Record summary: The record gives the reactivity of an RNA of 177 nucleotides to 2A3 and DMS. Values cover nucleotides 27 to 126. For 2A3, 762 sequencing reads were counted. For 2A3 the reverse transcriptase was SuperScript II with manganese. Conditions: 150 mM KOAc, 10 mM MgCl2 and 150 mM bicine (pH 8.5), 24 C.

[RMDB]
RNA sequence: GGGAACGACUCGAGUAGAGUCGAAAAGGAGACAGAGUUGCAAGUAAGGGAAAUUUUAUGUUUUUCAAGUAAAAUUAUCAAUGUGAACUCCAUAAAUAUUUUAGCAUUGAUUUAAAAGGGUGUUAAAUCCAAUUGAUAAGUUCGCUUAUCAAUUGGAAAAAGAAACAACAACAACAAC
Reactivity to 2A3 in 0.01 (KOAc 150mM, MgCl2 10mM, bicine 150mM(pH8.5), 24C), signal-to-noise 3, nucleotides 027 to 126: g010g000a040g030a000c030a010g020a010g050u000u100g020c050a070a050g060u160a070a050g120g010g020a060a040a020u160u190u120u020a080u100g060u010u010u010u080u190c090a110a070g000u090a040a090a080a080u120u130a030u040c020a000a000u060g000u010g020a060a010c060u060c150c040a040u220a100a150a010u140a070u100u300u100u100a000g000c000a000u000u000g000a000u040u000u200a130a130a010a010g110g030g000u040g020u010u030a000a110a030
Reactivity to DMS in 0.01 (KOAc 150mM, MgCl2 10mM, bicine 150mM(pH8.5), 24C), signal-to-noise 3, nucleotides 027 to 126: g000g010a040g000a140c120a070g010a120g020u020u000g010c080a100a050g000u020a060a100g010g010g000a040a080a070u010u000u030u010a020u010g000u010u020u000u040u040c090a030a210g000u020a020a030a050a040u000u010a040u010c010a000a020u000g010u000g020a090a060c110u040c100c100a110u010a080a060a130u010a080u020u020u020u020a300g000c000a000u000u000g000a020u000u000u010a010a050a060a100g020g000g020u000g000u000u010a070a020a120